An RNA of 207 nucleotides, treated with DMS and 2A3 and read out base by base. The RNA was probed in 150 mM KOAc, 10 mM MgCl2 and 150 mM bicine (pH 8.5) at 24 C. High DMS reactivity at an A or C suggests that its Watson-Crick edge is free. For 2A3 the reverse transcriptase was SuperScript II with manganese. Values are in units of 0.01, from 0 to 300, in steps of 10. Source: RMDB library M2RFPK, as collected in RNAgym.
RNA sequence: GGGAACGACUCGAGUAGAGUCGAAAACCCUGUCAUGAGGCCGAAACGAAGGCACGUACCCCUUCGAAUGGCGUCGGGGAGUCAGCGGCUAUAUAUGCGCCUAAUGCUGGCAUCCGGGAACGGGCGUAUUAGACAGUAAUCUUCGGAUUACUGUCAAGUAUUUUAUGGAGUUCGCUCCAUAAAAUACAAAAGAAACAACAACAACAAC
Reactivity to DMS in 0.01 (KOAc 150mM, MgCl2 10mM, bicine 150mM(pH8.5), 24C), signal-to-noise 3, nucleotides 027 to 156: c010c010c010u000g000u000c060a100u000g010a070g010g020c020c000g010a120a100a180c040g020a030a030g000g020c050a170c100g010u000a140c070c090c000c010u000u000c030g010a140a150u020g020g010c030g010u000c040g000g010g040g030a180g010u000c020a050g030c000g030g030c050u010a120u000a140u000a070u010g000c070g030c040c030u000a070a080u000g010c030u000g000g020c010a050u000c030c030g020g040g010a110a080c080g000g020g020c010g040u000a070u000u000a170g000a020c010a020g010u000a010a010u000c010u010u000c300g020g010a040u000u000a010c000u000g010u000c000a010a090
Reactivity to 2A3 in 0.01 (KOAc 150mM, MgCl2 10mM, bicine 150mM(pH8.5), 24C), signal-to-noise 5, nucleotides 027 to 156: c010c000c020u030g150u080c080a090u130g060a060g040g050c030c020g050a050a060a090c020g000a030a000g030g050c070a010c030g160u240a190c010c020c000c000u010u010c020g060a130a050u160g020g020c030g060u020c010g000g020g000g000a070g010u010c000a000g000c010g050g010c070u030a030u010a020u010a040u300g060c030g020c020c010u100a160a060u210g010c000u000g000g000c010a130u010c020c010g020g000g040a070a040c070g010g010g000c010g010u020a050u070u110a070g000a000c000a000g010u010a000a000u010c020u050u070c190g050g000a000u000u000a000c000u000g000u000c000a000a000